An RNA of 207 nucleotides, treated with DMS and 2A3 and read out base by base. The reactions ran in a buffer of 150 mM KOAc, 10 mM MgCl2 and 150 mM bicine (pH 8.5), at 24 C.
RNA sequence: GGGAACGACUCGAGUAGAGUCGAAAACAUUUGCGGAAAUUACUACUUUUGAUACCGCAAACAUCGCAUACAAUUACACCACAACAAGGCAUGACAAACGUAUUGACGCCCGCUAGUGGUAAAGUGCAAACUUGGCAAUUACCUGCGCGCGCAUUACCUUAAAGGAGCUGUUCGCAGCUCCUUUAAGAAAAGAAACAACAACAACAAC
Reactivity to DMS in 0.01 (KOAc 150mM, MgCl2 10mM, bicine 150mM(pH8.5), 24C), signal-to-noise 1, nucleotides 027 to 156: c080a140u000u000u010g000c020g050g000a080a080a260u000u000a020c050u000a080c070u010u000u000u010g020a140u010a190c030c020g000c000a000a000a010c030a090u000c070g070c110a180u000a070c100a050a060u000u000a130c110a120c000c040a020c060a040a110c060a030a130g000g040c040a100u030g000a120c100a060a020a100c080g030u000a050u000u000g000a200c040g000c020c080c020g020c020u000a140g040u000g010g000u000a020a030a060g070u000g000c060a060a090a120c050u000u000g030g000c000a100a170u000u000a050c020c020u010g020c060g020c220g000c080g020c030a080u020u000a110c100
Reactivity to 2A3 in 0.01 (KOAc 150mM, MgCl2 10mM, bicine 150mM(pH8.5), 24C), signal-to-noise 2, nucleotides 027 to 156: c010a030u000u000u040g000c000g000g070a060a260a030u150u050a060c060u040a030c050u150u150u100u070g030a040u050a070c000c000g000c000a000a000a000c010a010u070c020g020c060a010u020a140c020a040a040u160u060a070c050a060c030c060a020c000a170a000c000a030a030g070g030c060a070u160g070a070c070a060a100a070c020g040u010a010u000u070g110a160c020g000c030c080c000g050c090u050a010g180u060g100g000u020a000a010a040g080u040g010c000a040a100a150c200u170u100g080g010c010a020a140u010u020a000c000c020u010g010c000g010c010g000c000g000c000a000u030u050a000c000